[RMDB]
RNA sequence: GGGAACGACUCGAGUAGAGUCGAAAAGAAUCAAAUCAAACUAAUAAAGUAUGUAUUGUAAGGUAAAAGGAAAAGACAAAGAAGAAGAAGAAAGAAGAAAGCCUUCAAGAGGAUGAUGACAGAGUUAGAAGAUCGCUUCAGGAAGCUAUUUGGCACGCAAUACGAUGCGAUUCGUCGCAUCGUAUUGAAAAGAAACAACAACAACAAC
Reactivity to 2A3 in 0.01 (KOAc 150mM, MgCl2 10mM, bicine 150mM(pH8.5), 24C), signal-to-noise 3, nucleotides 027 to 156: g050a030a040u130c050a030a040a070u110c050a130a100a070c080u150a060a160u150a210a110a050g040u090a100u150g010u010a080u070u100g060u040a030a050g050g020u050a030a060a000a040g030g000a060a080a020a010g020a030c040a010a050a000g040a010a010g000a010a000g000a020a020g030a020a100a000g020a010a010g000a050a070a000g030c000c030u080u080c050a020a020g030a010g040g020a010u030g010a010u060g010a050c030a020g040a030g030u100u080a020g010a100a000g010a030u050c050g010c060u060u050c020a000g020g060a000a010g010c000u020a060u090u060u080g030g000c040a000c060g010
Reactivity to DMS in 0.01 (KOAc 150mM, MgCl2 10mM, bicine 150mM(pH8.5), 24C), signal-to-noise 2, nucleotides 027 to 156: g000a060a130u000c030a050a090a180u020c030a090a120a130c080u010a090a120u000a070a070a160g010u000a080u000g030u010a080u000u000g010u010a080a070g000g040u010a050a070a110a050g010g000a050a060a010a020g000a110c060a020a020a120g000a040a050g010a050a050g020a060a060g010a000a030a070g010a070a060g020a060a080a130g010c020c040u000u000c040a090a150g020a070g000g000a070u000g030a010u010g020a170c060a070g000a110g000u010u010a120g010a130a130g030a040u000c080g030c070u010u000c100a110g020g020a080a110g030c010u000a070u000u000u000g050g010c040a100c090g020
This 207-nucleotide RNA was probed chemically with 2A3 and DMS. The DMS profile rests on 2,613 reads. The 2A3 profile rests on 2,374 reads. Reactivities are given for positions 27 through 156.